[RMDB]
RNA sequence: GGGAACGACUCGAGUAGAGUCGAAAAACAACCGGCUGUUCGGCCACCCGGGCCUGGACAUGGAGCUGGGCCCCAGCCAGGGCCAGGAGACCAACGAGGUGUGCGAGCAGGCCGGCGGCGGGGCCUGCGCCGCUGUAUGAUUCGUCAUACAGCGGCGAAAAGAAACAACAACAACAAC
Reactivity to 2A3 in 0.01 (KOAc 150mM, MgCl2 10mM, bicine 150mM(pH8.5), 24C), signal-to-noise 2, nucleotides 027 to 126: a010c010a020a020c010c000g010g010c010u010g010u080u030c030g230g010c020c010a010c000c030c000g020g030g000c010c030u030g000g010a050c010a060u120g110g040a170g110c020u080g010g120g090c000c040c010c020a000g000c010c020a040g010g090g010c010c020a010g020g000a080g060a080c010c040a090a080c100g070a150g040g060u080g030u120g050c000g030a010g000c000a010g060g180c020c000g030g000c020g040g060c050g000g080g000g000c020c000u080g010
Reactivity to DMS in 0.01 (KOAc 150mM, MgCl2 10mM, bicine 150mM(pH8.5), 24C), signal-to-noise 3, nucleotides 027 to 126: a110c070a150a140c020c020g000g020c020u000g000u000u000c030g030g010c020c020a030c020c020c030g000g000g010c000c010u000g000g010a050c020a130u010g010g000a090g020c010u010g010g020g020c050c050c000c010a090g000c030c010a090g000g010g020c010c000a050g000g000a160g020a130c110c070a080a100c100g000a160g030g010u010g010u010g030c030g000a070g010c030a040g010g020c020c010g010g000c090g000g010c080g020g000g000g020c050c040u000g010